[RMDB]
RNA sequence: GGGAACGACUCGAGUAGAGUCGAAAAGCGUAGCGAGAGGUGAAAGUUGACGACCUACGUAGGACAAACCGAAGCGAAAGCUGUCGUCCAGUACGUUUCCGGUGAUCAAGGACGUAAGCCGGAGGAGGCUUAGUAGUAUCUUCGGAUACUACUAAGCAAAAGAAACAACAACAACAAC
Reactivity to 2A3 in 0.01 (KOAc 150mM, MgCl2 10mM, bicine 150mM(pH8.5), 24C), signal-to-noise 5, nucleotides 027 to 126: g000c010g030u030a010g010c050g030a070g000a020g090g050u080g070a120a030a050g060u050u050g070a070c030g020a030c000c020u030a030c030g030u050a050g030g040a020c050a050a120a020c050c030g050a030a000g020c000g030a040a020a000g000c010u020g040u040c010g020u010c010c000a040g080u070a030c050g010u000u080u010c010c000g000g020u070g010a080u210c090a110a100g170g050a060c060g030u030a020a030g020c000c010g000g020a010g010g060a050g060
Reactivity to DMS in 0.01 (KOAc 150mM, MgCl2 10mM, bicine 150mM(pH8.5), 24C), signal-to-noise 8, nucleotides 027 to 126: g020c040g010u000a060g020c050g010a120g010a130g010g010u000g010a060a080a140g010u000u000g010a110c060g010a100c200c030u000a030c050g020u000a060g010g010a050c110a060a090a120c120c050g010a140a040g010c010g000a090a090a160g010c010u000g000u000c100g000u000c030c030a120g000u010a050c100g000u000u000u000c010c010g000g000u010g000a110u000c100a080a150g000g010a100c130g010u000a090a210g010c010c010g000g010a080g010g010a120g010

The record gives the reactivity of an RNA of 177 nucleotides to 2A3 and DMS. Values cover nucleotides 27 to 126. 2A3 adducts were read by reverse transcription with SuperScript II with manganese. The 2A3 profile rests on 9,595 reads. The RNA was probed in 150 mM KOAc, 10 mM MgCl2 and 150 mM bicine (pH 8.5) at 24 C. As a SHAPE reagent, 2A3 marks flexible, mostly unpaired nucleotides at the ribose 2'-OH. The data come from the RNA Mapping Database (RMDB), library RFMREP.